[RMDB]
RNA sequence: GGGAACGACUCGAGUAGAGUCGAAAAGGUGCUCUGAAUGGAGUCCUCUACUGAGAUUAUAAAAUAGAAGGUAAGCUAUUAUCUCUUACAACAGGGCAGGGCUUGUUGGAAUAGGCGGUAAAGUCUAAAAACUACCUCACCUUCGGGUGAGGUAGAAGAAGCAUAUGUACUUCGGUACAUAUGCUUCAAAAGAAACAACAACAACAAC
Reactivity to 2A3 in 0.01 (KOAc 150mM, MgCl2 10mM, bicine 150mM(pH8.5), 24C), signal-to-noise 2, nucleotides 027 to 156: g080g020u060g010c000u030c020u120g140a100a150u230g030g000a020g060u030c000c030u000c010u080a170c050u070g000a010g010a090u120u110a090u150a130a090a110a060u060a040g040a150a030g090g080u110a040a030g020c020u000a030u060u040a010u090c010u000c020u060u070a060c020a100a010c010a080g010g010g000c000a000g000g020g000c010u040u010g010u000u000g030g000a110a040u040a030g000g000c010g050g020u100a050a080a000g010u060c020u060a050a050a000a010a020c000u000a000c000c000u000c010a000c000c010u020u030c190g020g010g000u000g000a000g000g000u000a000g000a000a000
Reactivity to DMS in 0.01 (KOAc 150mM, MgCl2 10mM, bicine 150mM(pH8.5), 24C), signal-to-noise 1, nucleotides 027 to 156: g030g010u000g000c030u000c070u020g010a120a220u010g020g000a050g000u010c030c020u010c020u000a190c010u000g000a150g030a170u000u000a150u000a130a120a080a090u010a040g010a030a080g000g030u010a010a130g010c110u000a080u000u000a040u000c000u000c020u010u010a040c050a030a120c090a040g000g000g050c030a080g010g000g030c050u000u000g050u010u020g000g000a040a150u000a090g030g040c010g030g010u000a030a030a140g020u020c060u000a030a050a040a130a150c000u010a010c000c000u010c000a020c000c020u000u000c300g050g020g000u000g030a010g000g030u000a000g010a030a120
An RNA of 207 nucleotides, treated with 2A3 and DMS and read out base by base. The DMS profile rests on 1,550 reads. It was measured as part of the RMDB library M2RFPK. In probing experiments dimethyl sulfate is read out at A N1 and C N3, which are open when not base-paired. 2A3 adducts were read by reverse transcription with SuperScript II with manganese.